The record gives the reactivity of an RNA of 177 nucleotides to 2A3 and DMS. DMS adducts were read by reverse transcription with MarathonRT.
RNA sequence: GGGAACGACUCGAGUAGAGUCGAAAAGAUAUGGACAUUGGUUUGUUCGUAUAUCGGAAACGAUAUAACGAUGAAGAACCCGUGUCCUAAGUCAAAUCUCUACAACUGGUUCGCCAGUUGUAGAGAACUAGAACGUGUAGUUCGCUACACGUUCUAGAAAAGAAACAACAACAACAAC
Reactivity to 2A3 in 0.01 (KOAc 150mM, MgCl2 10mM, bicine 150mM(pH8.5), 24C), signal-to-noise 4, nucleotides 027 to 126: g020a000u020a020u050g010g000a000c010a010u000u010g080g040u050u030u090g300u210u080c000g020u000a000u000a000u020c000g000g010a010a010a000c010g000a000u010a010u070a300a170c030g000a020u220g300a300a300g010a020a010c000c000c000g020u010g000u010c000c000u000a010a000g000u000c010a080a040a300u040c000u000c000u010a000c000a020a000c010u010g000g030u070u080c180g080c100c000a000g000u000u000g000u000a000g000a000g000a000a000
Reactivity to DMS in 0.01 (KOAc 150mM, MgCl2 10mM, bicine 150mM(pH8.5), 24C), signal-to-noise 2, nucleotides 027 to 126: g000a020u000a030u020g010g000a040c000a000u000u000g010g000u000u000u000g020u000u000c000g010u000a020u000a000u010c000g040g000a010a000a030c000g020a000u000a000u000a070a080c000g020a010u010g020a130a170g010a010a000c000c000c070g010u000g000u000c000c000u000a000a100g000u000c010a130a140a240u000c000u000c000u000a000c010a010a020c010u000g000g000u010u030c300g010c010c000a000g020u000u010g010u000a000g000a000g000a010a090